[RMDB]
Conditions: 150 mM KOAc, 10 mM MgCl2 and 150 mM bicine (pH 8.5), 24 C. The record gives the reactivity of an RNA of 177 nucleotides to 2A3 and DMS. As a SHAPE reagent, 2A3 marks flexible, mostly unpaired nucleotides at the ribose 2'-OH. The data come from the RNA Mapping Database (RMDB), library OK1LIB.
RNA sequence: GGGAACGACUCGAGUAGAGUCGAAAAACUUUGGCAUCUGCAUUAAUAUAGUGAUUUAUUGCUCCUUUAGCAAUGUCGGUUAUGAAGUUCAAGGGGAGAGAGAAGAAAUUGAUGAAAACAGCGGCUCUCGAUAAUGACAUUUCGAUGUCAUUAUCGAAAAAGAAACAACAACAACAAC
Reactivity to 2A3 in 0.01 (KOAc 150mM, MgCl2 10mM, bicine 150mM(pH8.5), 24C), signal-to-noise 8, nucleotides 027 to 126: a000c020u060u040u060g030g000c010a040u020c050u050g010c010a060u090u070a170a080u160a060u060a110g110u090g140a100u030u150u210a090u100u110g020c020u070c060c060u070u080u130a020g000c010a020a040u040g050u060c010g000g030u090u080a100u220g090a060a030g050u050u060c060a070a070g010g010g010g000a020g000a000g020a000g010a080a020g040a010a090a020u140u090g040a090u070g040a060a070a010a030c030a030g020c000g040g000c010u010c000
Reactivity to DMS in 0.01 (KOAc 150mM, MgCl2 10mM, bicine 150mM(pH8.5), 24C), signal-to-noise 7, nucleotides 027 to 126: a060c050u010u010u010g010g000c030a030u010c060u010g010c030a070u010u010a050a090u010a090u030a080g020u010g010a070u010u020u020a040u030u010g010c070u010c180c120u020u010u010a060g010c070a010a010u020g020u000c070g010g010u020u020a070u030g000a050a080g010u010u010c060a080a070g000g010g000g000a030g000a030g000a030g010a040a050g000a030a050a070u030u010g010a090u010g000a070a020a070a090c140a060g000c080g000g000c050u000c070